Annotation
Chemical mapping of a 177-nucleotide RNA with 2A3 and DMS.
[RMDB]
RNA sequence: GGGAACGACUCGAGUAGAGUCGAAAAACAGAGCGAAGGGGGGACGGAGAAGGCUAUGUUGGCCCGGCGACGGUUGUCCCGGUUUAAGCGUGUAGGCUGGUUUUCCAGGCAAAUCCGGAAAAAGAAAGUCAUUAAGUUCAUUCGUGAACUUAAUGACAAAAGAAACAACAACAACAAC
Reactivity to 2A3 in 0.01 (KOAc 150mM, MgCl2 10mM, bicine 150mM(pH8.5), 24C), signal-to-noise 1, nucleotides 027 to 126: a010c000a000g060a000g050c040g030a060a090g000g000g020g000g010g000a010c030g000g000a050g010a110a020g040g000c000u050a040u200g070u070u110g070g000c000c050c000g020g020c040g000a020c040g130g060u070u150g030u070c000c020c020g010g000u030u100u020a040a010g020c010g000u030g030u060a040g070g070c030u020g030g000u000u100u070u020c000c000a000g000g040c010a060a090a000u060c030c010g080g080a070a050a000a000a010g090a010a020a000
Reactivity to DMS in 0.01 (KOAc 150mM, MgCl2 10mM, bicine 150mM(pH8.5), 24C), signal-to-noise 3, nucleotides 027 to 126: a090c060a100g000a090g010c080g000a070a060g010g000g000g030g010g000a070c050g010g010a100g010a100a070g000g020c040u000a060u000g000u000u000g020g010c090c010c010g010g010c120g020a050c070g000g010u010u010g010u000c020c010c000g020g000u010u000u000a050a070g000c060g020u000g020u010a090g010g010c030u010g010g000u000u010u010u000c020c020a090g000g010c070a050a060a090u010c030c020g000g010a020a030a030a070a090g010a070a070a150
For DMS the reverse transcriptase was MarathonRT. For 2A3, 1,476 sequencing reads were counted.